Chemical mapping of a 177-nucleotide RNA with 2A3 and DMS.
[RMDB]
RNA sequence: GGGAACGACUCGAGUAGAGUCGAAAAAUCUAUCGAUAGACAUGCUAGACGUACGUACCUAGACGCUAGGGUACCUGAUCGAUCUAGGGAUCUAGUACGCGUACGUACACUGAGUACAGACAUGUGACACGUGUAUUGACUUCGGUCAAUACACGUGAAAAGAAACAACAACAACAAC
Reactivity to 2A3 in 0.01 (KOAc 150mM, MgCl2 10mM, bicine 150mM(pH8.5), 24C), signal-to-noise 4, nucleotides 027 to 126: a010u070c050u090a100u120c040g140a150u080a120g150a030c000a000u030g000c020u060a020g040a140c060g010u020a000c000g000u000a010c010c020u050a090g030a120c110g000c090u020a010g090g000g000u090a110c010c040u050g040a120u170c160g040a020u010c090u090a020g020g000g000a030u020c010u000a020g010u020a040c080g020c010g010u000a000c010g000u020a020c040a020c070u120g100a050g070u060a080c030a040g120a050c000a030u050g000u020g040a030
Reactivity to DMS in 0.01 (KOAc 150mM, MgCl2 10mM, bicine 150mM(pH8.5), 24C), signal-to-noise 4, nucleotides 027 to 126: a070u000c030u000a150u010c070g020a120u000a090g020a050c030a050u000g010c020u000a080g000a090c060g020u000a010c010g010u000a090c110c040u010a070g000a040c130g000c010u000a030g000g010g010u010a140c040c030u000g000a070u010c110g000a080u010c040u000a020g000g000g040a190u010c030u010a010g000u000a070c120g010c250g000u000a020c030g020u010a040c040a130c160u000g010a090g000u010a070c130a090g010a170c040a020u000g020u010g030a200

For DMS, 3,663 sequencing reads were counted.